[RMDB]
RNA sequence: GGGAACGACUCGAGUAGAGUCGAAAAGAUAUGGAGUCCUCAGUACUCGCUUCCCGAAGAACUAAAUUUAGUCGGAAACGACUAAAUUUAGGGAGGGAAGAACUACGAGGAACUGGACUCCUAAGUCCGAAUAUAUGACCUUCGGGUCAUAUAUUCGAAAAGAAACAACAACAACAAC
Reactivity to DMS in 0.01 (KOAc 150mM, MgCl2 10mM, bicine 150mM(pH8.5), 24C), signal-to-noise 2, nucleotides 027 to 126: g000a020u000a130u010g000g000a010g010u010c000c000u000c050a080g000u010a140c030u010c000g000c010u000u000c000c000c000g030a170a170g020a140a140c000u000a000a010a000u000u000u000a000g010u000c000g020g000a040a050a130c000g020a000c000u000a010a010a020u000u000u000a010g000g000g000a190g010g000g000a010a010g000a090a040c070u020a300c010g000a030g000g000a250a130c140u010g000g000a030c010u010c000c000u000a000a090g030u000c020
Reactivity to 2A3 in 0.01 (KOAc 150mM, MgCl2 10mM, bicine 150mM(pH8.5), 24C), signal-to-noise 1, nucleotides 027 to 126: g000a030u050a050u110g000g000a000g000u000c020c010u000c020a010g010u000a000c000u000c010g000c040u010u030c000c000c080g040a230a240g140a110a030c000u020a020a020a010u000u000u020a010g010u020c000g000g020a060a000a010c010g030a010c000u010a000a000a020u010u000u000a020g000g010g190a180g020g030g010a020a000g000a040a040c140u280a070c120g000a030g000g000a000a010c030u020g000g000a000c010u010c010c000u000a010a020g010u070c020
Annotation:
The data come from the RNA Mapping Database (RMDB), library TTRINS. An RNA of 177 nucleotides, treated with DMS and 2A3 and read out base by base. The reactions ran in a buffer of 150 mM KOAc, 10 mM MgCl2 and 150 mM bicine (pH 8.5), at 24 C. In probing experiments dimethyl sulfate is read out at A N1 and C N3, which are open when not base-paired. For 2A3, 2,797 sequencing reads were counted. DMS adducts were read by reverse transcription with MarathonRT.